Record summary
Chemical mapping of a 207-nucleotide RNA with 2A3. High 2A3 reactivity points to a flexible backbone, as in loops and unpaired stretches. For 2A3, 1,618 sequencing reads were counted. It was measured as part of the RMDB library VIROID. The reactions ran in a buffer of 150 mM KOAc, 10 mM MgCl2 and 150 mM bicine (pH 8.5), at 24 C.
RNA sequence: GGGAACGACUCGAGUAGAGUCGAAAAACACCUCCAGUCGACGGGCCGGCUACUCUUCUUUCCCUUUUCUCGUCUUCCUCGGUCAACCUCUUAAGUUCCUCUUCUUCCUCCUUGCUGAGGUGCUUUCCUCCCGCGCUCAGCUGCUUCUUCUUGUUCUCUACUACGCUAAGUUCGCUUAGCGUAGUAGAAAAGAAACAACAACAACAAC
Reactivity to 2A3 in 0.01 (KOAc 150mM, MgCl2 10mM, bicine 150mM(pH8.5), 24C), signal-to-noise 2, nucleotides 027 to 156: a000c050a100c010c030u020c000c040a080g060u060c020g070a080c040g050g040g000c040c010g110g000c020u050a050c020u030c020u110u010c000u040u080u070c020c020c050u050u030u030u020c090u030c070g090u010c000u080u010c010c000u020c020g000g050u040c040a060a060c010c010u070c030u060u090a100a050g040u080u040c000c000u040c000u110u030c010u070u030c030c030u010c020c020u080u020g030c040u030g010a030g020g090u040g040c020u080u150u070c000c010u080c010c000c000g030c000g000c020u030c020a050g000c020u050g040c040u060u060c000u120u000c000u040u070g020u150u020c030u000